[RMDB]
An RNA of 207 nucleotides, treated with 2A3 and read out base by base. The reactions ran in a buffer of 150 mM KOAc, 10 mM MgCl2 and 150 mM bicine (pH 8.5), at 24 C. It was measured as part of the RMDB library RNAMAK. For 2A3 the reverse transcriptase was SuperScript II with manganese.

RNA sequence: GGGAACGACUCGAGUAGAGUCGAAAAGAGUGCGUUUCGACGCACUCAAAAAAACCUUUGUGUGCAAUGACGUGGAAGACUGGACUGACCCAUUGGGUCAUUCCACCACCCAUAAGACAGCACACUCUGGUAAAAAACGGUCAGUUCGCUGACCGAAGUCUGUCUGUGGAUUCGUCCACAGACAGACAAAAGAAACAACAACAACAAC
Reactivity to 2A3 in 0.01 (KOAc 150mM, MgCl2 10mM, bicine 150mM(pH8.5), 24C), signal-to-noise 1, nucleotides 027 to 156: g010a000g000u000g000c020g000u030u200u260c230g070a000c010g000c020a000c000u020c000a090a020a000a000a000a000a000c000c000u070u000u000g010u050g010u000g000c010a000a190u200g040a120c030g000u030g030g000a110a060g070a110c150u010g000g010a010c000u000g000a000c000c060c100a300u190u300g000g000g020u010c000a000u000u000c000c000a000c010c010a020c020c000c000a010u060a290a000g020a090c080a050g100c010a000c000a000c000u000c000u030g000g050u070a180a120a020a090a000a000c030g010g000u000c000a000g010u050u080c200g000c140u000g000a000c030c000g000a010a050